[RMDB]
RNA sequence: GGGAACGACUCGAGUAGAGUCGAAAAUAGGCGGAUAGGAACCAGGUCAUGUUUGUAUGUGAUUUGGGCCGACAUCCCCGCCGAAAGAAAUUCGUGAAGAUCUAAGGUCGCUUCUGGAUGGAUUUGCUUUAUACUAGCUCUUCGGAGCUAGUAUAAAAAAAGAAACAACAACAACAAC
Reactivity to 2A3 in 0.01 (KOAc 150mM, MgCl2 10mM, bicine 150mM(pH8.5), 24C), signal-to-noise 6, nucleotides 027 to 126: u150a010g020g000c020g010g020a070u080a090g080g000a100a160c010c010a000g010g020u010c000a010u020g140u070u220u140g300u300a130u140g030u000g000a000u000u000u020g020g000g010c020c030g010a020c010a050u070c000c010c000c010g000c000c000g010a020a030a010g030a000a050a000u040u030c040g040u100g070a020a010g020a060u020c050u120a100a130g090g040u070c070g040c070u020u000c020u030g030g040a060u030g030g030a040u050u050u200g040c010
Reactivity to DMS in 0.01 (KOAc 150mM, MgCl2 10mM, bicine 150mM(pH8.5), 24C), signal-to-noise 7, nucleotides 027 to 126: u020a110g000g020c010g000g000a120u010a150g010g000a060a110c000c010a010g010g010u010c010a000u000g000u030u040u050g020u050a050u010g020u010g000a010u000u030u010g010g000g010c010c030g000a170c250a100u040c090c080c010c020g000c000c000g000a070a100a080g010a130a110a060u020u010c030g000u010g010a080a080g010a050u010c060u010a110a130g000g010u010c070g010c040u010u010c020u010g000g000a070u000g000g000a140u010u020u010g010c140
Structure probing data (2A3 and DMS) for a 177-nucleotide construct. It was measured as part of the RMDB libraries RFM100 and RFMREP. Values are in units of 0.01, from 0 to 300, in steps of 10.